[RMDB]
RNA sequence: GGGAACGACUCGAGUAGAGUCGAAAAUAUCUCGUUCUCCCCGAAAUAGCUUUAGGGCUAGCGUCGCGCGUUAACCCCGGGAGGUAGAGCACCGGAUCGAUGAGGGGGCUUCGCCGCCUACCGAUUCACUUAAUCCUUGGUUCGCCAAGGAUUAAGUAAAAGAAACAACAACAACAAC
Reactivity to DMS in 0.01 (KOAc 150mM, MgCl2 10mM, bicine 150mM(pH8.5), 24C), signal-to-noise 5, nucleotides 027 to 126: u030a080u010c040u000c020g020u010u000c030u020c010c020c020c050g000a100a080a090u020a040g010c030u000u010u020a120g030g000g000c020u000a030g020c080g000u000c090g020c130g010c040g000u010u020a090a120c040c020c000c030g010g000g000a080g010g010u000a080g010a080g010c110a110c070c040g000g010a050u010c050g000a110u000g010a130g000g010g000g000g010c020u030u000c180g010c050c080g020c000c010u000a070c010c010g000a080u000u000c020
Reactivity to 2A3 in 0.01 (KOAc 150mM, MgCl2 10mM, bicine 150mM(pH8.5), 24C), signal-to-noise 7, nucleotides 027 to 126: u130a020u020c020u000c020g020u100u010c030u030c010c000c000c000g060a060a090a090u150a060g040c060u120u140u190a140g000g000g040c000u010a020g000c020g050u040c050g030c020g000c020g050u040u070a070a070c000c000c010c010g030g010g020a060g030g010u080a040g010a010g020c000a020c010c030g010g020a040u050c040g010a030u070g070a090g000g020g000g010g000c020u120u090c110g050c050c020g050c000c010u050a140c000c020g020a020u030u030c010